[RMDB]
RNA sequence: GGGAACGACUCGAGUAGAGUCGAAAACAGUUUGAAAUGGAAAGAUCAACUCUGAUUAAUUUACUUCAAUUGCACCACUUCGAGCCAAAACUCAGUGUUGAAGGAAUCAUAGUUGUGCACGGAAUUGAGACUUUCCUACAUUCGUGUAGGAAAGUCUAAAAGAAACAACAACAACAAC
Reactivity to 2A3 in 0.01 (KOAc 150mM, MgCl2 10mM, bicine 150mM(pH8.5), 24C), signal-to-noise 3, nucleotides 027 to 126: c030a020g070u090u190u170g250a130a120a110u190g070g100a130a080a040g080a070u060c030a000a050c030u000c050u100g070a050u060u170a160a060u100u170u300a150c020u030u040c030a000a110u130u110g140c040a050c090c000a000c010u100u110c160g000a000g070c120c140a040a080a050a060c010u000c020a020g000u030g080u030u110g010a050a010g040g010a040a000u000c000a000u050a060g000u040u000g000u030g080c050a000c110g060g080a070a100u040u130g050
Reactivity to DMS in 0.01 (KOAc 150mM, MgCl2 10mM, bicine 150mM(pH8.5), 24C), signal-to-noise 2, nucleotides 027 to 126: c010a130g070u000u010u030g010a040a070a080u060g010g020a070a080a130g000a040u050c060a000a020c030u000c060u000g010a020u010u010a070a090u000u080u000a110c000u030u020c000a010a030u070u020g020c160a080c200c020a000c050u010u030c170g040a020g040c050c110a100a020a090a290c000u000c000a010g000u010g000u000u000g000a010a000g000g010a010a000u000c030a020u000a020g000u000u000g000u000g020c090a050c150g000g000a070a050u040u040g020